Structure probing data (2A3) for a 177-nucleotide construct. The data come from the RNA Mapping Database (RMDB), library OK1LIB.
[RMDB]
RNA sequence: GGGAACGACUCGAGUAGAGUCGAAAAGCUCGGAGACGAGCAAGGCUGACAAAACCCUGUCCCAACCUCCACGUGGUGUCGGCUGGAUAAUGCUGCAUUAUGUUGCAUUUAUCAACAGGGAAGCAAAAAUCGCGAUUAGCUUCGGCUAAUCGCGAUUAAAAGAAACAACAACAACAAC
Reactivity to 2A3 in 0.01 (KOAc 150mM, MgCl2 10mM, bicine 150mM(pH8.5), 24C), signal-to-noise 2, nucleotides 027 to 126: g000c000u040c000g000g070a180g010a060c000g000a000g000c040a020a000g020g000c030u030g010a040c000a030a300a030a110c000c000c000u000g020u050c040c000c000a000a000c030c040u080c000c000a130c000g070u120g010g010u020g030u030c020g000g000c050u100g100g000a020u010a030a000u000g020c050u030g000c030a030u090u190a150u300g030u030u060g050c000a000u000u060u160a000u010c000a000a000c000a020g030g000g010a030a000g010c070a040a010a040